Structure probing data (2A3) for a 177-nucleotide construct.
RNA sequence: GGGAACGACUCGAGUAGAGUCGAAAAUUUGAGCCCGCGCAGGAUGCCGAUGGUGUCCUCCACCGACGGCUCGCCGACGUACACCUGUUGGAAACGGCGCUCGAGCGCGGCGUCCUUCUCGAUGUGCGCUUGGCGUCGGAUUCGUCCGACGCCAAGCAAAAGAAACAACAACAACAAC
Reactivity to 2A3 in 0.01 (KOAc 150mM, MgCl2 10mM, bicine 150mM(pH8.5), 24C), signal-to-noise 1, nucleotides 027 to 126: u070u070u050g030a000g000c000c000c000g030c020g160c020a050g000g090a050u070g010c000c060g210a130u300g020g000u050g130u210c000c150u090c020c020a030c050c050g080a110c000g020g000c000u030c020g020c000c000g110a100c000g040u160a090c060a100c060c080u180g000u300u140g110g020a060a000a000c000g000g000c000g010c050u100c120g030a030g000c090g000c000g000g000c020g000u060c000c000u040u150c030u000c090g080a150u060g090u040g120c040